[RMDB]
RNA sequence: GGGAACGACUCGAGUAGAGUCGAAAAACUGCAUCUACGGAUGCCGAACUACGUUCAUCCAAUUUAUUUGGACGCAUGAAAUGAGAAUAGGGAACGGGAUUCUCAUACGCAGGCUACGGCCUGCGAAAAAACUCCUUAUGCUUCGGCAUAAGGAGAACUAACAAUCUAAGUUCGCUUAGAUUGUUAGAAAAGAAACAACAACAACAAC
Reactivity to DMS in 0.01 (KOAc 150mM, MgCl2 10mM, bicine 150mM(pH8.5), 24C), signal-to-noise 3, nucleotides 027 to 156: a070c030u000g000c030a030u000c010u000a110c210g050g000a020u010g020c000c050g000a120a160c020u000a010c010g010u000u010c020a110u000c050c110a150a150u000u000u000a150u050u000u000g010g030a020c000g010c010a080u020g010a090a130a090u010g000a070g000a050a080u000a120g040g000g020a040a090c040g020g000g000a300u000u020c000u000c010a050u000a060c030g020c000a010g000g040c010u010a090c210g060g000c020c000u000g000c000g010a000a000a060a060a020a040c000u000c000c000u000u000a000u000g030c000u000u000c300g060g010c000a010u000a010a000g010g010a000g010a010a050
Reactivity to 2A3 in 0.01 (KOAc 150mM, MgCl2 10mM, bicine 150mM(pH8.5), 24C), signal-to-noise 4, nucleotides 027 to 156: a000c030u030g000c000a000u000c010u020a040c200g130g000a000u000g000c010c020g070a080a050c060u130a030c060g000u010u010c010a010u000c000c010a030a030u070u200u170a160u110u060u090g000g000a000c010g020c020a060u180g110a140a170a010u010g000a010g000a010a000u010a040g070g010g000a010a000c010g000g000g010a000u010u000c000u000c000a000u020a020c010g020c010a000g000g000c000u040a090c290g080g000c030c000u010g000c010g010a020a000a000a000a000a010c000u000c000c000u000u000a000u000g000c000u020u030c130g110g000c010a000u000a000a010g000g000a000g000a000a000

This 207-nucleotide RNA was probed chemically with DMS and 2A3.